[RMDB]
RNA sequence: GGGAACGACUCGAGUAGAGUCGAAAAGAUAUGGAGCGAACUACGCUGCCAUACAGCGUUGAAAUCGGAAACGAUGGAGCUGUAGGCGGAGCGCGCUCCUAAGUCAAAAGCUUACUUCGGUAAGCAACGAUAGAAAUGGGUUCGCCCAUUUCUAUCGAAAAGAAACAACAACAACAAC
Reactivity to 2A3 in 0.01 (KOAc 150mM, MgCl2 10mM, bicine 150mM(pH8.5), 24C), signal-to-noise 5, nucleotides 027 to 126: g030a020u090a040u180g010g000a000g010c010g010a070a020c030u100a040c170g020c070u050g050c020c000a040u030a030c000a000g010c010g290u300u060g010a030a040a010u010c010g020g020a060a040a040c020g000a010u020g020g030a020g000c010u000g010u020a010g020g000c010g020g070a050g010c040g000c000g000c000u000c000c000u010a130a010g030u000c040a040a040a080a060g010c000u000u010a000c010u030u120c280g090g000u000a000a000g000c030a020a020
Reactivity to DMS in 0.01 (KOAc 150mM, MgCl2 10mM, bicine 150mM(pH8.5), 24C), signal-to-noise 7, nucleotides 027 to 126: g000a060u000a300u010g000g010a010g010c000g000a060a070c050u010a090c060g010c010u000g000c090c100a240u000a030c000a000g010c010g000u010u020g000a060a140a020u000c000g010g010a120a100a210c010g000a010u000g000g000a090g020c000u000g010u000a010g010g010c010g010g000a020g010c300g000c020g000c000u010c000c000u000a010a080g000u000c030a090a100a080a120g010c000u000u000a010c000u000u010c160g020g000u000a000a010g000c010a050a060